[RMDB]
The record gives the reactivity of an RNA of 207 nucleotides to 2A3. The RNA was probed in 150 mM KOAc, 10 mM MgCl2 and 150 mM bicine (pH 8.5) at 24 C. Reactivities are given for positions 27 through 156.
RNA sequence: GGGAACGACUCGAGUAGAGUCGAAAAAGUGGCUAGAGACGUCACAGGACCUAAAGAAGGCAUUCAACUACGGGAGACUGAUCUCACGGAAAUACGACAUCCAGAGCUCAACCCUUCCCGCUGGUCUGUAUGCACUCAAUGGGACCCUGAACGCUGCUGAACAGACCGUUUUCGAACGGUCUGUUCAAAAAGAAACAACAACAACAAC
Reactivity to 2A3 in 0.01 (KOAc 150mM, MgCl2 10mM, bicine 150mM(pH8.5), 24C), signal-to-noise 1, nucleotides 027 to 156: a000g060u040g010g000c030u080a030g020a030g050a300c030g020u050c050a060c000a230g000g000a160c000c000u060a120a130a120g020a030a050g060g010c010a000u040u030c040a060a000c030u000a000c020g000g040g000a000g010a040c020u020g010a010u000c000u030c030a040c190g060g070a070a100a130u300a100c160g070a070c010a060u040c000c040a060g000a040g050c000u050c000a050a080c130c010c000u060u040c040c000c030g000c200u100g000g000u000c080u020g020u010a000u000g010c060a250c030u000c000a000a060u090g000g000g040a080c030c000c000u020g000a000a020c050g020c060u140g000c000